[RMDB]
RNA sequence: GGGAACGACUCGAGUAGAGUCGAAAAGAACGUCAUCCUGCUGGCAUGCGAUGCUUUUGGCGUGCUCCCUCCCGUGAGCAAGCUGAGCCUGGCGCAGACCAUGUACCACUUCAUAAGCGGCUAUACGGAAUGGUGAACAUUUCGAUGUUCACCAUUCAAAAGAAACAACAACAACAAC
Reactivity to DMS in 0.01 (KOAc 150mM, MgCl2 10mM, bicine 150mM(pH8.5), 24C), signal-to-noise 5, nucleotides 027 to 126: g000a090a080c130g020u000c050a060u000c060c030u000g040c080u000g010g010c090a070u000g020c060g000a120u000g010c070u000u010u010u010g020g010c010g010u000g010c020u000c000c030c060u020c030c020c040g030u010g000a050g010c030a060a090g010c020u000g010a100g010c040c100u010g020g020c040g010c040a040g000a110c070c050a060u000g020u010a090c050c030a070c030u010u020c100a070u000a100a080g010c040g010g010c050u030a060u020a090c200g030
Reactivity to 2A3 in 0.01 (KOAc 150mM, MgCl2 10mM, bicine 150mM(pH8.5), 24C), signal-to-noise 3, nucleotides 027 to 126: g040a090a000c030g040u020c020a060u020c020c030u060g030c050u020g020g030c030a050u100g030c040g050a040u030g020c030u080u030u060u130g060g020c010g020u020g000c010u020c000c000c020u050c030c030c010g060u070g000a010g000c030a040a020g010c030u040g010a010g020c010c020u040g040g040c050g000c050a020g000a040c010c020a030u040g000u020a070c010c000a050c020u060u070c060a060u050a200a020g040c000g040g010c030u080a040u020a120c100g080

The data come from the RNA Mapping Database (RMDB), library OK2TST.
This 177-nucleotide RNA was probed chemically with DMS and 2A3.
2A3 adducts were read by reverse transcription with SuperScript II with manganese.
For DMS the reverse transcriptase was MarathonRT.
Conditions: 150 mM KOAc, 10 mM MgCl2 and 150 mM bicine (pH 8.5), 24 C.
The DMS profile rests on 4,810 reads.
Reactivities are given for positions 27 through 126.